[RMDB]
RNA sequence: GGGAACGACUCGAGUAGAGUCGAAAAGAUAUGGAGUUACUUGGACAUGCAGAUGCUUCGGAAACGAAGCGCUGCAACAGCCAAGGUAACUCCUAAGUCAAAACUGAGUGGGUUCGCCCACUCAGAACUAAGGGUGGUAGUUCGCUACCACCCUUAGAAAAGAAACAACAACAACAAC
Reactivity to DMS in 0.01 (KOAc 150mM, MgCl2 10mM, bicine 150mM(pH8.5), 24C), signal-to-noise 2, nucleotides 027 to 126: g010a030u000a300u010g020g030a010g000u010u000a000c010u000u000g000g020a080c110a300u010g000c010a000g010a050u000g040c000u010u000c000g000g000a080a080a220c000g020a010a000g000c010g020c000u000g000c000a020a020c210a190g010c020c000a010a010g000g000u000a000a000c000u000c000c000u000a010a100g000u000c030a130a070a060a300c020u000g000a020g030u000g000g000g010u000u010c300g010c000c000c000a000c000u000c000a020g000a010a290
Reactivity to 2A3 in 0.01 (KOAc 150mM, MgCl2 10mM, bicine 150mM(pH8.5), 24C), signal-to-noise 2, nucleotides 027 to 126: g050a020u080a070u170g010g020a020g000u010u000a000c020u020u010g020g020a070c060a300u200g000c010a020g220a300u140g040c000u000u000c000g050g000a050a060a030c080g000a000a000g000c010g020c000u010g000c000a020a020c080a040g050c000c010a020a000g090g020u000a000a010c000u000c000c000u000a020a010g020u030c020a000a030a170a220c010u000g000a020g000u000g010g050g000u110u170c300g240c010c000c010a000c010u000c020a010g000a000a000

Chemical mapping of a 177-nucleotide RNA with DMS and 2A3.
For 2A3 the reverse transcriptase was SuperScript II with manganese.
The 2A3 profile rests on 2,054 reads.